[RMDB]
RNA sequence: GGGAACGACUCGAGUAGAGUCGAAAAACAUAAUUCGAGAUUUUUCAGGAUGGAUUUUUUUAGGUAUCUAUCAAAACUAUUCUGAUGAUCAAUACAGUAUUUUUGUCGCAUUAUUAUUACGGUAGUGUUAUUUACUAACGUUCGCGUUAGUAAAUAAAAAAGAAACAACAACAACAAC
Reactivity to DMS in 0.01 (KOAc 150mM, MgCl2 10mM, bicine 150mM(pH8.5), 24C), signal-to-noise 3, nucleotides 027 to 126: a090c050a070u010a060a070u020u010c060g000a240g010a030u000u000u020u010u000c000a000g000g000a000u010g000g010a020u000u000u000u000u000u000u000a010g000g040u040a080u030c010u000a010u000c030a010a000a000a020c000u000a000u000u000c010u000g010a000u000g000a010u000c000a070a120u020a080c120a090g020u010a030u010u010u000u010u010g010u020c100g010c040a020u000u000a030u000u010a080u010u020a070c120g010g020u000a030g010u010g010
Reactivity to 2A3 in 0.01 (KOAc 150mM, MgCl2 10mM, bicine 150mM(pH8.5), 24C), signal-to-noise 7, nucleotides 027 to 126: a000c030a060u240a120a080u170u130c070g010a040g010a150u000u080u090u070u040c000a000g000g000a010u010g060g030a090u000u020u000u010u010u010u040a030g060g020u190a120u180c010u010a000u000c000a000a010a000a000c000u010a000u010u000c000u000g000a000u020g000a000u010c000a020a070u130a120c040a040g170u130a170u060u120u030u090u090g110u090c040g000c040a010u020u070a010u060u060a090u060u200a150c060g030g040u070a040g010u030g020